Structure probing data (DMS and 2A3) for a 177-nucleotide construct.

RNA sequence: GGGAACGACUCGAGUAGAGUCGAAAAGACGGACGCUUGCGGCGUGCUUAACACGAACAAGUCGAACGAUGAAUCCCAUCGGGAUGGAUCGCUGGUGAACGCGAGGGUCACACGUGGGCAAUAUGCCAAAUAAAUUUUAAUUCGUUAAAAUUUAUUUAAAAGAAACAACAACAACAAC
Reactivity to DMS in 0.01 (KOAc 150mM, MgCl2 10mM, bicine 150mM(pH8.5), 24C), signal-to-noise 9, nucleotides 027 to 126: g000a090c060g000g010a110c040g010c010u000u000g010c100g000g010c020g010u000g000c130u060u040a130a170c030a020c010g000a230a130c060a040a080g000u030c030g020a070a160c020g000a060u010g000a120a090u000c020c020c010a130u030c130g000g000g000a060u010g000g000a040u010c030g000c060u010g000g010u010g010a080a090c070g000c050g000a070g010g000g000u010c030a050c060a300c090g010u020g000g000g000c020a110a090u030a070u020g010c030c030
Reactivity to 2A3 in 0.01 (KOAc 150mM, MgCl2 10mM, bicine 150mM(pH8.5), 24C), signal-to-noise 9, nucleotides 027 to 126: g080a010c050g030g000a010c030g020c080u030u040g020c040g130g000c000g030u020g000c030u120u130a120a020c010a010c030g050a110a010c030a070a020g070u210c030g030a040a010c010g000a020u070g070a040a070u040c030c020c000a050u110c080g030g000g010a040u050g040g050a030u020c010g000c070u060g020g090u090g080a090a020c030g010c020g030a050g030g030g010u030c020a030c010a010c120g050u150g040g010g000c030a080a110u090a110u300g020c010c000

For DMS the reverse transcriptase was MarathonRT.
The DMS profile rests on 47,668 reads.
The reactions ran in a buffer of 150 mM KOAc, 10 mM MgCl2 and 150 mM bicine (pH 8.5), at 24 C.